[RMDB]
RNA sequence: GGGAACGACUCGAGUAGAGUCGAAAAGAUAUGGACAGGAGCAACAGCGUGGAGUCGGAAACGACUCCCACGACAUGCUCCGUCCUAAGUCAAAAGCAGCACUAUCCCUUCGGGGAUAGUGCUGCAACUGUACCCAACAGUUCGCUGUUGGGUACAGAAAAGAAACAACAACAACAAC
Reactivity to DMS in 0.01 (KOAc 150mM, MgCl2 10mM, bicine 150mM(pH8.5), 24C), signal-to-noise 2, nucleotides 027 to 126: g020a030u000a190u010g000g000a000c000a100g050g000a000g000c000a030a170c260a110g020c000g050u010g010g000a060g010u020c000g010g010a060a060a110c000g000a010c000u000c190c040c020a000c010g050a170c110a120u000g000c000u000c000c000g000u010c010c000u000a010a040g000u000c040a120a040a080a120g000c000a010g010c000a000c010u000a020u000c000c000c000u000u020c210g020g000g020g000a000u000a010g010u000g020c000u020g000c020a000a020
Reactivity to 2A3 in 0.01 (KOAc 150mM, MgCl2 10mM, bicine 150mM(pH8.5), 24C), signal-to-noise 1, nucleotides 027 to 126: g010a020u000a040u080g000g000a010c180a230g060g000a010g000c010a030a170c120a170g220c020g000u020g000g010a010g000u020c000g020g000a020a000a010c010g000a000c020u030c050c050c010a010c010g070a050c020a010u020g000c000u000c000c000g000u010c000c020u010a040a000g010u000c020a000a020a060a120g010c000a000g010c000a000c000u020a000u010c000c010c040u000u070c300g050g000g030g000a000u000a000g000u000g010c000u000g010c020a000a000